[RMDB]
RNA sequence: GGGAACGACUCGAGUAGAGUCGAAAAAGUUUUGCCUGUUAGGUGAGGCUCCUAUGCAAACACACGCCACUGCCCAAAAAUGUCCAAAGACGCCAAUGGGUAGAACAGGGAUUGUCGGAUUAAGGCUAAAACAGCCCAUGCUUCGGCAUGGGCUGAACGGUAAUAUAUCGUUCGCGAUAUAUUACCGAAAAGAAACAACAACAACAAC
Reactivity to 2A3 in 0.01 (KOAc 150mM, MgCl2 10mM, bicine 150mM(pH8.5), 24C), signal-to-noise 3, nucleotides 027 to 156: a010g040u060u010u040u090g060c020c030u130g160u200u170a060g000g030u010g030a030g010g040c020u080c010c020u060a080u130g040c040a030a130a040c050a000c020a020c110g020c030c010a040c010u000g000c010c000c000a000a070a000a010a020u020g000u000c030c020a150a080a050g020a010c010g000c010c000a030a020u010g010g000g010u020a010g010a020a010c020a030g020g030g020a050u040u060g090u090c010g050g000a010u140u100a140a010g030g000c020u040a030a010a000a040c000a000g000c010c000c000a000u010g000c000u000u090c160g070g000c030a020u060g010g000g010c010u000g010a010a000
Reactivity to DMS in 0.01 (KOAc 150mM, MgCl2 10mM, bicine 150mM(pH8.5), 24C), signal-to-noise 2, nucleotides 027 to 156: a070g010u000u000u020u000g020c000c020u000g060u000u000a040g050g020u020g000a180g000g030c010u010c100c050u000a120u000g020c050a090a050a070c050a130c050a070c050g030c030c000a300c030u000g000c000c010c010a000a090a090a070a070u000g030u000c000c030a130a120a180g000a060c050g020c050c040a030a220u000g000g000g000u000a040g000a040a050c050a070g020g020g000a070u000u000g000u000c000g020g000a120u000u000a050a110g030g030c050u000a030a060a070a220c000a010g020c000c000c000a010u000g010c020u010u020c260g080g000c050a010u000g010g010g070c010u000g000a000a030